[RMDB]
Chemical mapping of a 177-nucleotide RNA with 2A3 and DMS. For 2A3 the reverse transcriptase was SuperScript II with manganese. The RNA was probed in 150 mM KOAc, 10 mM MgCl2 and 150 mM bicine (pH 8.5) at 24 C. For 2A3, 35,722 sequencing reads were counted. Values cover nucleotides 27 to 126. Source: RMDB library OK1LIB, as collected in RNAgym.
RNA sequence: GGGAACGACUCGAGUAGAGUCGAAAAGGGAGGUUGACUCCCCGGCACCAAAAGGCCCUGGCCCAACUAGGUGCUCAUUGAAUGAAUAUACAAGAGAAUGAAUGUAGUGUCAGCUGGUGGGACAGUGCAGUGAUGUGUUCUUCGGAACACAUUAUUGAAAAGAAACAACAACAACAAC
Reactivity to 2A3 in 0.01 (KOAc 150mM, MgCl2 10mM, bicine 150mM(pH8.5), 24C), signal-to-noise 9, nucleotides 027 to 126: g020g010g010a010g030g050u180u230g110a110c010u000c000c000c000c000g030g020c030a100c040c000a030a040a010a060g080g010c020c020c020u030g050g000c000c010c010a080a070c030u030a020g110g000u020g010c010u010c010a020u020u050g080a060a080u060g030a070a020u180a010u050a130c100a110a050g050a020g040a170a060u150g030a050a020u050g040u170a020g030u020g040u050c020a030g030c070u020g010g020u020g000g020g000a010c010a010g010u020g040
Reactivity to DMS in 0.01 (KOAc 150mM, MgCl2 10mM, bicine 150mM(pH8.5), 24C), signal-to-noise 9, nucleotides 027 to 126: g000g000g000a010g010g010u040u040g000a240c010u000c000c000c000c050g000g010c100a210c010c020a050a070a120a120g010g010c020c030c020u010g000g000c010c010c010a050a070c040u010a050g010g010u000g010c030u000c020a020u000u000g010a170a090u020g010a170a100u030a120u030a130c200a100a110g010a150g010a140a080u020g000a070a040u010g010u020a030g010u010g000u010c030a070g000c040u010g000g010u000g000g000g000a030c020a020g000u010g010

The DMS profile rests on 243,218 reads.
For DMS the reverse transcriptase was MarathonRT.